The record gives the reactivity of an RNA of 177 nucleotides to 2A3 and DMS.
It was measured as part of the RMDB library RFMREP.
The RNA was probed in 150 mM KOAc, 10 mM MgCl2 and 150 mM bicine (pH 8.5) at 24 C.
For DMS, 520 sequencing reads were counted.
For 2A3, 1,227 sequencing reads were counted.
RNA sequence: GGGAACGACUCGAGUAGAGUCGAAAACAACAAGAAAGUAAUUUCCCACCUCACCCUACCACCACCCAGAAAAGGAGCACAGAGAUGGGGAAGAGAGUGGCUGCAUCUGGCAUCCAGCCAGAGGAGUGUACGUAGAAUGGUUCGCCAUUCUACGUACAAAAGAAACAACAACAACAAC
Reactivity to 2A3 in 0.01 (KOAc 150mM, MgCl2 10mM, bicine 150mM(pH8.5), 24C), signal-to-noise 2, nucleotides 027 to 126: c040a000a040c000a030a070g140a200a120a000g080u200a070a100u030u010u030c010c000c000a010c000c000u010c020a060c000c010c010u070a050c030c020a010c040c000a020c000c010c010a050g140a050a100a020a020g040g010a060g050c120a030c040a110g090a000g030a070u080g010g000g050g030a080a100g080a010g010a010g020u050g030g010c060u070g010c000a100u020c000u000g000g020c020a010u080c090c110a050g010c000c000a030g000a000g030g020a070g010u100
Reactivity to DMS in 0.01 (KOAc 150mM, MgCl2 10mM, bicine 150mM(pH8.5), 24C), signal-to-noise 1, nucleotides 027 to 126: c180a040a130c180a080a040g020a080a130a070g020u000a070a140u000u000u000c000c000c000a040c030c020u000c000a090c030c030c030u000a020c020c080a110c080c060a120c030c000c020a110g020a150a000a120a020g010g010a050g010c060a030c200a150g010a000g020a040u000g000g000g010g000a070a020g000a020g040a050g030u000g000g010c140u000g040c030a080u000c030u000g010g070c000a140u020c160c140a160g030c000c000a000g000a010g030g010a220g000u000